Structure probing data (DMS and 2A3) for a 177-nucleotide construct.
As a SHAPE reagent, 2A3 marks flexible, mostly unpaired nucleotides at the ribose 2'-OH.
The RNA was probed in 150 mM KOAc, 10 mM MgCl2 and 150 mM bicine (pH 8.5) at 24 C.
It was measured as part of the RMDB library OK2TST.
Values are in units of 0.01, from 0 to 300, in steps of 10.
[RMDB]
RNA sequence: GGGAACGACUCGAGUAGAGUCGAAAAAGCGAGCCAUGUAUCUUAGAGGGGUUAACAGGAGUUUACAUGGGAUCUGGCCCGAGAAAAUAUGCAAGGGAGUCCCCACUCAUCUGGCCACUGACACGGAACCCUCUGAAUAGUUCGCUAUUCAGAGGGUAAAAGAAACAACAACAACAAC
Reactivity to DMS in 0.01 (KOAc 150mM, MgCl2 10mM, bicine 150mM(pH8.5), 24C), signal-to-noise 3, nucleotides 027 to 126: a090g020c070g020a060g010c010c020a020u020g000u000a010u010c050u010u000a110g010a110g010g000g010g010u010u000a080a110c150a090g020g010a080g010u000u010u010a030c060a040u000g000g000g000a040u000c070u010g030g020c000c000c010g000a130g000a090a070a070a110u000a050u010g020c090a060a110g010g010g010a130g010u000c020c000c000c050a140c070u000c030a060u000c060u000g020g010c010c030a040c080u010g010a080c130a050c110g010g000a150
Reactivity to 2A3 in 0.01 (KOAc 150mM, MgCl2 10mM, bicine 150mM(pH8.5), 24C), signal-to-noise 1, nucleotides 027 to 126: a000g080c040g000a010g000c010c010a010u030g000u040a080u010c030u040u070a060g050a090g100g030g000g030u080u050a050a040c020a070g100g070a030g060u040u070u040a020c010a020u050g010g000g030a040u030c010u070g090g000c000c000c010g070a060g100a000a140a000a030u200a040u060g010c030a010a050g000g020g010a030g040u060c010c030c010c010a030c020u060c010a060u010c030u030g000g040c010c000a030c050u040g040a020c010a020c180g060g030a040